[RMDB]
RNA sequence: GGGAACGACUCGAGUAGAGUCGAAAACAGCCAGCGGCAAGUCGCAUCGCUGACUGACACGGUGGCCAAGUCCAUCGCGAUUUCAGGCGCCAGUGCGCAGAGCGCCGAGGCGGCCCUGGUCCAGUUUGGCCAGGCUCUGGCGUCGGGCGUUCUGCGAAAUUUACUCAGUCUUCGGACUGAGUAAAUUAAAAGAAACAACAACAACAAC
Reactivity to DMS in 0.01 (KOAc 150mM, MgCl2 10mM, bicine 150mM(pH8.5), 24C), signal-to-noise 2, nucleotides 027 to 156: c030a010g000c000c010a060g000c020g030g020c030a090a080g000u000c090g030c070a140u000c010g030c010u000g010a020c000u010g020a300c070a040c030g020g020u010g000g030c000c010a100a100g010u000c000c000a130u000c080g030c050g010a060u000u000u010c030a130g000g010c000g000c010c020a150g040u000g010c030g010c000a070g000a020g030c000g020c010c000g010a100g010g020c040g010g040c300c000c010u000g010g010u000c010c060a300g020u050u000u000g010g030c040c030a010g010g010c200u000c030u010g030g020c010g010u010c010g000g000g010c030g000u000u000c010u000g000c020g020a030
Reactivity to 2A3 in 0.01 (KOAc 150mM, MgCl2 10mM, bicine 150mM(pH8.5), 24C), signal-to-noise 3, nucleotides 027 to 156: c000a000g010c010c000a000g000c000g050g010c030a100a090g230u210c080g000c080a110u140c030g000c020u010g010a030c010u030g040a030c000a010c080g000g000u020g050g000c020c020a040a010g010u020c030c000a300u230c120g020c200g040a020u160u210u150c110a030g010g010c010g000c020c000a030g050u080g060c000g000c000a000g000a000g020c000g010c000c000g000a080g010g000c010g000g120c010c000c010u010g010g020u070c040c060a170g050u150u280u280g020g000c010c000a030g000g010c000u070c070u210g130g050c030g100u010c030g010g030g000c000g020u010u010c000u000g000c000g000a000